RNA sequence: GGGAACGACUCGAGUAGAGUCGAAAACCUACACCGUUAGAUCGAGAAAUGGACGUUCGAGAUUCGUCCACGUCACCAUGAGUUAAAAUUUAACUCUCAGUAAAUUUUAACUCAUGAGUGAAUCUGCCCAUGAUUUAGAGUUCGCUCUAAAUCAUGGAAAAGAAACAACAACAACAAC
Reactivity to DMS in 0.01 (KOAc 150mM, MgCl2 10mM, bicine 150mM(pH8.5), 24C), signal-to-noise 5, nucleotides 027 to 126: c010c000u000a130c140a130c120c050g000u000u010a070g010a090u010c050g010a140g000a090a120a070u000g010g010a030c010g010u010u000c130g000a170g010a200u010u000c010g020u000c000c010a040c230g010u010c010a010c010c000a000u000g010a010g010u010u000a000a000a020a000u000u000u000a030a090c060u000c170u010c210a100g020u010a020a000a010u000u000u000u000a010a010c000u000c000a000u000g000a050g030u000g000a020a060u010c060u000g000c300
Reactivity to 2A3 in 0.01 (KOAc 150mM, MgCl2 10mM, bicine 150mM(pH8.5), 24C), signal-to-noise 5, nucleotides 027 to 126: c000c000u020a040c070a070c030c040g090u130u130a070g010a300u170c060g030a020g080a160a150a110u100g010g000a000c010g010u050u080c140g130a060g020a300u060u070c000g000u000c000c010a020c030g050u010c000a000c000c000a010u000g000a000g000u000u000a000a020a000a020u010u010u020a090a110c020u040c020u030c090a010g030u020a000a010a010u010u010u000u000a000a000c000u010c000a000u000g000a000g000u000g000a010a070u030c010u050g030c000

Structure probing data (DMS and 2A3) for a 177-nucleotide construct. The RNA was probed in 150 mM KOAc, 10 mM MgCl2 and 150 mM bicine (pH 8.5) at 24 C. The 2A3 profile rests on 7,191 reads.